RNA sequence: GGGAACGACUCGAGUAGAGUCGAAAAGAUAUGGACGAUAAUGAGGGAGCUGGUCGGAAACGACUCAGCUUUGAUCUCAAUCGUCCUAAGUCAAAUCUUACGAUAAACUUCGGUUUAUCGUAAGAAACGCUAACGAGAAGUUCGCUUCUCGUUAGCGAAAAGAAACAACAACAACAAC
Reactivity to 2A3 in 0.01 (KOAc 150mM, MgCl2 10mM, bicine 150mM(pH8.5), 24C), signal-to-noise 1, nucleotides 027 to 126: g000a010u040a020u110g020g010a020c000g000a010u050a140a300u200g000a010g030g160g010a000g000c000u000g000g000u000c010g000g040a080a020a030c020g020a000c030u070c300a000g040c000u010u000u070g030a030u000c000u000c010a030a010u000c010g010u000c010c000u000a040a020g010u000c030a050a030a150u010c000u010u000a010c000g000a000u010a020a010a000c010u040u090c210g080g000u030u010u000a000u000c000g010u000a000a000g000a000a000a010
Reactivity to DMS in 0.01 (KOAc 150mM, MgCl2 10mM, bicine 150mM(pH8.5), 24C), signal-to-noise 1, nucleotides 027 to 126: g000a020u000a300u010g010g000a010c000g000a000u000a110a180u010g000a010g010g000g000a000g010c000u000g000g010u000c000g000g010a070a010a150c000g000a000c010u030c000a000g000c000u000u000u010g000a040u020c000u000c000a030a040u000c000g000u000c000c000u000a010a110g000u000c030a100a070a190u000c000u000u000a000c000g000a030u020a000a000a000c000u000u020c290g050g010u000u000u000a010u000c000g010u000a010a000g020a010a070a130